[RMDB]
RNA sequence: GGGAACGACUCGAGUAGAGUCGAAAAUCGUUAUUAUCUUUAAAUUCCGUGGGAUCACGUAGCAAUUGAUUUGUCAUUUCCACUUUCACAGUUACACUUACAUUUGCUAUUUAAACGCAUGACGCGACCUUCCGUCUAGUUUCGACUAGACGGAAGGAAAAGAAACAACAACAACAAC
Reactivity to 2A3 in 0.01 (KOAc 150mM, MgCl2 10mM, bicine 150mM(pH8.5), 24C), signal-to-noise 6, nucleotides 027 to 126: u060c020g060u060u090a060u130u070a050u060c150u070u180u140a120a250a160u200u030c040c000g000u060g020g040g030a070u100c040a030c100g030u020a020g020c020a050a060u040u110g110a170u040u010u070g060u040c030a050u070u020u020c080c010a050c030u080u160u170c130a100c020a090g020u060u050a050c030a000c030u020u090a100c000a090u030u060u020g010c010u010a050u090u130u090a100a130a030c060g010c060a040u100g100a050c050g060c040g030a090
Reactivity to DMS in 0.01 (KOAc 150mM, MgCl2 10mM, bicine 150mM(pH8.5), 24C), signal-to-noise 2, nucleotides 027 to 126: u020c130g000u000u010a030u000u060a110u000c060u000u000u010a170a080a000u000u060c020c030g030u030g000g000g050a170u070c090a020c050g000u000a010g050c050a000a090u000u010g000a120u000u000u010g050u060c140a220u000u010u000c050c000a030c120u000u000u040c020a030c090a080g060u000u040a040c140a020c000u000u000a040c050a030u000u000u000g000c050u000a050u000u010u000a010a080a100c090g000c140a060u000g020a030c180g030c120g030a060
Notes:
The record gives the reactivity of an RNA of 177 nucleotides to 2A3 and DMS. For DMS, 1,524 sequencing reads were counted. For DMS the reverse transcriptase was MarathonRT. Source: RMDB library OK1LIB, as collected in RNAgym. The RNA was probed in 150 mM KOAc, 10 mM MgCl2 and 150 mM bicine (pH 8.5) at 24 C. Reactivities are given for positions 27 through 126.